[RMDB]
Structure probing data (2A3 and DMS) for a 207-nucleotide construct. For DMS the reverse transcriptase was MarathonRT. The RNA was probed in 150 mM KOAc, 10 mM MgCl2 and 150 mM bicine (pH 8.5) at 24 C.
RNA sequence: GGGAACGACUCGAGUAGAGUCGAAAAUGCCACCUUCGGGUGGCAAAAAAAGAUAUGGACGACUAUUGGUCCGAUAAGUUACGGGAUCGGAAACGAUCCGGUAACUUUUGACGGACAGGGUCGUCCUAAGUCAAAAACGUCGCUUUCGAGCGACGAACUACUAAGUUGGAUUCGUCCAACUUAGUAGAAAAGAAACAACAACAACAAC
Reactivity to 2A3 in 0.01 (KOAc 150mM, MgCl2 10mM, bicine 150mM(pH8.5), 24C), signal-to-noise 2, nucleotides 027 to 156: u040g020c000c000a020c030c000u050u080c300g160g000g000u040g000g040c030a040a010a000a000a000a030a000g000a020u030a010u080g000g000a000c000g010a000c000u070a160u300u150g130g020u030c000c000g000a030u010a040a010g000u000u000a000c050g090g000g000a000u000c020g040g020a060a140a050c010g000a000u000c000c010g020g020u000a000a000c000u010u030u010u050g050a010c000g010g020a000c010a000g050g000g000u000c010g000u000c000c000u000a000a000g020u010c020a000a000a000a080a140c010g000u000c000g030c010u110u140u150c190g100a030g010c000g000a000c000g010a010a000
Reactivity to DMS in 0.01 (KOAc 150mM, MgCl2 10mM, bicine 150mM(pH8.5), 24C), signal-to-noise 2, nucleotides 027 to 156: u000g030c000c000a070c020c000u000u000c300g080g070g080u020g010g080c020a000a000a040a040a030a000a020g000a060u000a210u000g010g010a020c000g020a040c000u000a130u000u000g030g020u000c010c000g000a140u000a010a020g000u010u000a010c000g010g020g000a030u000c010g030g000a180a120a190c010g010a010u000c000c000g010g010u010a000a000c000u000u000u000u000g010a300c030g000g000a120c000a160g010g010g010u000c000g000u010c030c010u000a000a040g000u020c040a060a080a030a070a070c020g000u010c000g010c040u010u000u010c260g030a110g010c000g010a020c000g000a040a080